[RMDB]
RNA sequence: GGGAACGACUCGAGUAGAGUCGAAAAGCCCGCCAAGAAGCGACCCCUCCGGGGCGAGCUGAGCGGCGUGCGGCGGGGUGUCAUCCGUCAGUUCUCCUAGUGACGCAGGCAGUGCGACCUUGUACGCGAUUAAAUAAUACUUCGGUAUUAUUUAAUCAAAAGAAACAACAACAACAAC
Reactivity to DMS in 0.01 (KOAc 150mM, MgCl2 10mM, bicine 150mM(pH8.5), 24C), signal-to-noise 5, nucleotides 027 to 126: g000c020c050c010g040c010c020a110a200g010a200a030g010c020g000a300c300c000c010c000u010c190c140g010g030g010g010c010g000a210g000c000u000g000a120g010c200g010g000c020g020u000g010c040g000g010c020g010g010g000g020u010g000u010c030a050u000c040c010g010u000c020a130g010u010u010c020u000c010c130u000a070g000u010g010a050c060g030c070a060g000g000c040a080g010u010g010c040g010a110c030c050u000u010g010u000a100c090g010c100
Reactivity to 2A3 in 0.01 (KOAc 150mM, MgCl2 10mM, bicine 150mM(pH8.5), 24C), signal-to-noise 2, nucleotides 027 to 126: g020c000c010c040g040c000c010a080a070g130a070a000g010c000g030a040c010c010c010c000u010c070c160g020g010g040g000c030g000a010g010c020u040g010a030g040c030g010g000c010g010u010g020c020g010g010c000g000g000g000g020u060g020u000c040a050u040c010c020g020u020c030a030g020u080u000c030u030c000c010u020a060g020u030g110a020c010g000c040a020g060g000c030a030g070u030g070c030g000a060c010c000u060u110g050u070a050c070g020c030